[RMDB]
RNA sequence: GGGAACGACUCGAGUAGAGUCGAAAAGAUCAGUCCAUAAUUGUUGUUUUGGAUUAAAUGCUUUGAAUGAAUAAUUAGAUACCAUGCUAACAACAAUAUUAGGCGAUUCAGUUAUUUCUCGCGCAUAAGUAUCAGUGAUUUCAGUGUAAAUUUUAUAGAGUUAGGAAAUGUUCGCAUUUCCUAACUCAAAAGAAACAACAACAACAAC
Reactivity to 2A3 in 0.01 (KOAc 150mM, MgCl2 10mM, bicine 150mM(pH8.5), 24C), signal-to-noise 1, nucleotides 027 to 156: g070a090u210c090a090g040u100c000c000a060u270a090a170u210u000g000u000u000g000u030u060u000u020g010g000a000u000u160a010a060a060u090g000c190u190u140u120g060a090a040u030g000a010a000u030a130a060u120u060a250g000a000u000a030c000c040a000u150g020c030u090a040a020c000a020a020c000a000a220u120a280u300u070a060g130g000c000g000a000u110u110c000a210g040u040u050a030u080u220u070c120u040c040g010c000g000c030a000u010a140a100g000u000a030u020c000a000g100u040g020a050u050u000u020c000a000g020u020g050u020a000a000a250u000u150u190u170a080u150a030